Chemical mapping of a 177-nucleotide RNA with DMS and 2A3. The 2A3 profile rests on 5,429 reads. DMS (dimethyl sulfate) methylates the pairing face of unpaired adenines and cytosines.
[RMDB]
RNA sequence: GGGAACGACUCGAGUAGAGUCGAAAAAGAUAUGUAUCAGAUCUAGGUGUUACUGUGGGAGAUGGUUUGGCUUGGGAUUCAAGAUAUAAUGAAAGCUACAAGCAGGAGUUAUUGAGGAAAGAUGAAAAUGACACGUAUAUUUCGAUAUACGUGUCAUAAAAGAAACAACAACAACAAC
Reactivity to DMS in 0.01 (KOAc 150mM, MgCl2 10mM, bicine 150mM(pH8.5), 24C), signal-to-noise 8, nucleotides 027 to 126: a060g010a080u010a050u010g010u000a090u000c070a070g010a070u010c050u000a090g010g020u000g000u010u000a060c080u000g010u000g010g000g000a080g010a070u010g010g010u000u000u000g010g000c030u000u010g000g010g000a100u000u000c050a030a090g010a140u010a050u000a060a090u010g000a120a080a080g010c030u010a060c150a050a090g010c020a050g010g010a150g000u000u000a050u000u010g010a090g010g000a040a050a060g010a080u010g010a040a060a080
Reactivity to 2A3 in 0.01 (KOAc 150mM, MgCl2 10mM, bicine 150mM(pH8.5), 24C), signal-to-noise 4, nucleotides 027 to 126: a010g080a040u090a020u160g090u060a070u080c030a020g020a070u020c020u070a030g000g050u040g030u080u060a050c030u040g040u090g040g030g000a050g010a040u040g040g030u050u090u070g040g000c000u010u030g040g000g010a030u030u030c010a000a050g070a060u060a000u030a200a110u080g070a050a030a020g030c020u050a110c060a090a040g000c000a010g020g030a020g020u090u090a080u070u080g030a020g030g050a050a040a030g070a040u140g050a060a090a040

Background
As a SHAPE reagent, 2A3 marks flexible, mostly unpaired nucleotides at the ribose 2'-OH. The RNA was probed in 150 mM KOAc, 10 mM MgCl2 and 150 mM bicine (pH 8.5) at 24 C. The DMS profile rests on 12,697 reads.